Background:
This 207-nucleotide RNA was probed chemically with 2A3. Values cover nucleotides 27 to 156. For 2A3, 794 sequencing reads were counted.
[RMDB]
RNA sequence: GGGAACGACUCGAGUAGAGUCGAAAAAUCACCGGUGGGGAACCCCAUACGGCAACGGCGUAGAAGUUAAUGCUAACCAAUCCGUGGUAUCUACGCGACGGAGCAUCCACGGAUAACUCUAACAAGGCUAAGCGUCUCGGUUUCGACCGAGACGCAACAUUUUACCUCACUUCGGUGAGGUAAAAUGAAAAGAAACAACAACAACAAC
Reactivity to 2A3 in 0.01 (KOAc 150mM, MgCl2 10mM, bicine 150mM(pH8.5), 24C), signal-to-noise 2, nucleotides 027 to 156: a000u080c010a010c000c000g050g040u010g000g030g010g090a100a080c090c000c000c000a050u180a220c010g000g030c020a010a070c020g030g050c000g010u040a000g010a120a010g020u130u210a190a020u070g030c010u060a050a030c080c030a090a040u030c000c000g010u010g000g030u050a050u040c000u000a010c010g050c030g040a020c080g130g050a040g020c020a040u070c000c010a000c000g000g000a000u030a010a050c060u050c010u200a150a090c100a070a040g140g000c030u130a110a020g000c010g000u000c000u010c000g000g030u030u120u140c140g050a010c000c000g000a000g010a010c000g000c000a000a000